[RMDB]
RNA sequence: GGGAACGACUCGAGUAGAGUCGAAAAGGAGGGCGCCUCGGUCACCCCAAUCCCCCCCGACCGGGUUCCCCCGGCAACCCCGAAGGCGGAGAGGCCAAGGGCCCGUUCGGCGAUGGCCACAUCCUCCCAGUUGGAAUAAGUUCGCUUAUUCCAACUGAAAAGAAACAACAACAACAAC
Reactivity to DMS in 0.01 (KOAc 150mM, MgCl2 10mM, bicine 150mM(pH8.5), 24C), signal-to-noise 4, nucleotides 027 to 126: g020g010a100g020g000g000c100g010c050c000u010c040g030g010u010c010a300c080c060c030c040a100a260u020c030c000c000c000c010c010c000g000a010c000c000g020g000g010u000u000c010c010c000c010c000g010g010c250a120a140c130c010c000c050g000a140a090g010g020c090g000g000a060g000a220g010g000c010c010a050a100g010g000g020c000c000c210g000u000u010c120g010g000c000g010a230u000g010g000c020c000a050c080a190u000c010c010u000c010c010
Chemical mapping of a 177-nucleotide RNA with DMS.
Values are in units of 0.01, from 0 to 300, in steps of 10.
It was measured as part of the RMDB library OK2TST.